This 177-nucleotide RNA was probed chemically with DMS. DMS adducts were read by reverse transcription with MarathonRT.
RNA sequence: GGGAACGACUCGAGUAGAGUCGAAAACACACAGACCUUGGCUCACUGCCACCUUGCCCUGCCUCCUCCUUGGCCUCUAUAGACUCCUGGUUGCUCGGGAGUGCCCAGUGCUGUGGUCAUCUGGUCAGAGGCAAUAAGGGUUCGCCCUUAUUGCCUCAAAAGAAACAACAACAACAAC
Reactivity to DMS in 0.01 (KOAc 150mM, MgCl2 10mM, bicine 150mM(pH8.5), 24C), signal-to-noise 1, nucleotides 027 to 126: c070a090c120a080c110a110g000a070c060c020u000u010g020g000c040u000c120a040c080u000g000c060c050a080c050c050u000u010g010c040c020c050u000g000c020c020u000c020c030u020c000c030u010u000g000g030c050c010u000c070u030a080u020a100g010a060c030u000c030c070u000g000g030u000u010g010c100u000c020g000g000g010a130g010u020g010c080c020c020a030g020u000g020c060u010g020u000g020g000u000c020a030u010c010u010g010g010u000c180a070